[RMDB]
RNA sequence: GGGAACGACUCGAGUAGAGUCGAAAAUUGCAUGUUAGGGACGAAGCCGCCCCCGGGCGCUCCCCUCUGUCCACCUUCGAGGGGGUUCACACCUCCAGGCGGCGGGCCGGCUACUCUUCUUUUCCUUCAACGGACCUGUUCGCAGGUCCGAAAAGAAACAACAACAACAAC
Reactivity to DMS in 0.01 (KOAc 150mM, MgCl2 10mM, bicine 150mM(pH8.5), 24C), signal-to-noise 3, nucleotides 027 to 129: u070u030g000c080a070u040g040u060u030a110g000g020g080a030c100g010a000a000g010c160c000g020c000c000c000c000c010g050g000g030c050g070c160u060c010c030c010c110u070c030u030g020u000c020c090a080c050c140u080u050c000g010a130g000g000g000g000g000u030u070c240a140c160a020c000c000u030c080c080a170g030g020c070g090g060c080g090g000g030c040c030g070g000c010u030a110c040u000c110u000u010c040u080u100u000u000c010c070u050u030c090a040a160
Reactivity to 2A3 in 0.01 (KOAc 150mM, MgCl2 10mM, bicine 150mM(pH8.5), 24C), signal-to-noise 3, nucleotides 027 to 129: u150u060g100c010a010u070g060u060u100a050g010g000g010a000c010g060a140a000g030c010c000g050c020c000c000c000c000g040g000g020c020g010c110u140c000c000c000c000u010c000u020g120u000c030c010a010c060c030u040u120c060g050a180g000g010g010g060g000u180u210c010a060c030a010c050c020u060c070c030a030g040g000c000g030g000c050g000g000g000c070c010g000g000c020u020a000c100u120c000u130u060c000u060u080u050u040c010c000u060u090c020a050a010
The data come from the RNA Mapping Database (RMDB), library 15KLIB. Chemical mapping of a 170-nucleotide RNA with DMS and 2A3. The DMS profile rests on 4,954 reads. The 2A3 profile rests on 3,119 reads. The reactions ran in a buffer of 150 mM KOAc, 10 mM MgCl2 and 150 mM bicine (pH 8.5), at 24 C.